[RMDB]
RNA sequence: GGGAACGACUCGAGUAGAGUCGAAAAGAGUAGAGCAGAGAAAUCACCUCCAGAGGACCCCUUCAGCGAACAGAGAGCGCUGCGAGCGAGGAGUAAGACCAUAGCGAUGGAAAGAGAUGCUAGGAGUUAACCGCUUGCUUCGGCAAGCGGAAAAGAAACAACAACAACAAC
Reactivity to DMS in 0.01 (KOAc 150mM, MgCl2 10mM, bicine 150mM(pH8.5), 24C), signal-to-noise 2, nucleotides 027 to 129: g020a080g050u030a070g020a080g000c080a070g030a040g040a060a060a090u030c050a100c090c020u010c070c010a190g020a170g000g000a100c000c000c000c000u040u000c080a130g010c020g070a140a020c130a040g040a080g010a130g010c000g060c030u040g030c150g040a070g030c070g020a130g000g000a040g000u010a040a040g020a020c090c090a120u030a070g030c160g040a110u070g020g020a050a070a030g020a000g030a080u000g020c060u000a120g020g000a060g000u040u000a060a040
Reactivity to 2A3 in 0.01 (KOAc 150mM, MgCl2 10mM, bicine 150mM(pH8.5), 24C), signal-to-noise 2, nucleotides 027 to 129: g060a000g060u220a030g020a010g000c110a000g030a020g100a120a130a020u070c040a120c070c010u010c010c020a030g000a020g070g020a040c000c000c000c000u000u000c000a010g020c000g020a000a000c040a020g140a020g000a050g080c010g000c010u020g050c030g030a030g000c040g060a070g040g010a010g010u040a100a000g050a060c030c060a030u020a040g070c050g090a080u080g010g040a120a090a000g050a000g000a000u150g010c000u000a000g030g030a010g000u030u040a150a020
Background:
The data come from the RNA Mapping Database (RMDB), library 15KLIB. The record gives the reactivity of an RNA of 170 nucleotides to DMS and 2A3. DMS (dimethyl sulfate) methylates the pairing face of unpaired adenines and cytosines. For 2A3 the reverse transcriptase was SuperScript II with manganese. The reactions ran in a buffer of 150 mM KOAc, 10 mM MgCl2 and 150 mM bicine (pH 8.5), at 24 C.